The record gives the reactivity of an RNA of 177 nucleotides to DMS. For DMS the reverse transcriptase was MarathonRT. The RNA was probed in 150 mM KOAc, 10 mM MgCl2 and 150 mM bicine (pH 8.5) at 24 C.

RNA sequence: GGGAACGACUCGAGUAGAGUCGAAAAGGUAAGUUCUGGGGGAAACGCGUAAUGACCAUUAAAGCUGGUGACAUUACGUAAGGUAGGUAUCAGUAAAACUUUACUGAUAGAAGGGAUACUAGUGGCAUCCACUGAAUCACUUCGGUGAUUCAGUGGAAAAAGAAACAACAACAACAAC
Reactivity to DMS in 0.01 (KOAc 150mM, MgCl2 10mM, bicine 150mM(pH8.5), 24C), signal-to-noise 1, nucleotides 027 to 126: g000g020u000a060a100g000u010u000c160u000g020g000g000g000g010a100a060a030c150g000c000g000u020a010a000u010g000a150c020c000a010u000u030a100a070a100g020c300u000g010g030u030g000a240c030a000u000u000a000c000g000u000a030a070g040g000u000a060g040g040u000a000u000c000a000g000u000a000a040a180a150c280u000u000u000a000c000u000g000a000u000a000g010a080a050g000g020g000a160u000a120c170u000a050g020u010g020g040c160a040